[RMDB]
This 207-nucleotide RNA was probed chemically with 2A3.

RNA sequence: GGGAACGACUCGAGUAGAGUCGAAAAGGGAAGACAUAAAGAGCCUUUGUGAAUUAAAGUGGAAGAGAAUAACACUUUGCAUGCUAUAAACGUGAAAACUAACAUUUUUGGCCAGACACAGUGGCUCAUGCAUGUAAUUCUAGCACUUUGGAGGCCAACUAUCCACCGUCUUCGGACGGUGGAUAGUAAAAGAAACAACAACAACAAC
Reactivity to 2A3 in 0.01 (KOAc 150mM, MgCl2 10mM, bicine 150mM(pH8.5), 24C), signal-to-noise 1, nucleotides 027 to 156: g020g000g020a060a000g100a030c030a080u160a050a140a000g080a030g050c010c020u070u130u020g020u020g030a090a240u260u210a070a010a010g020u070g080g020a190a100g060a020g080a130a050u120a110a000c030a010c050u090u040u040g000c000a010u040g000c000u110a020u130a180a080a000c050g010u060g150a010a080a020a080c050u090a060a000c020a210u070u070u000u000u000g080g010c290c000a010g110a070c000a000c010a040g020u010g060g000c000u020c080a000u040g040c030a020u030g050u080a110a000u080u070c010u000a050g080c000a000c020u040u010u010g090g040a070g020g050c000c000a000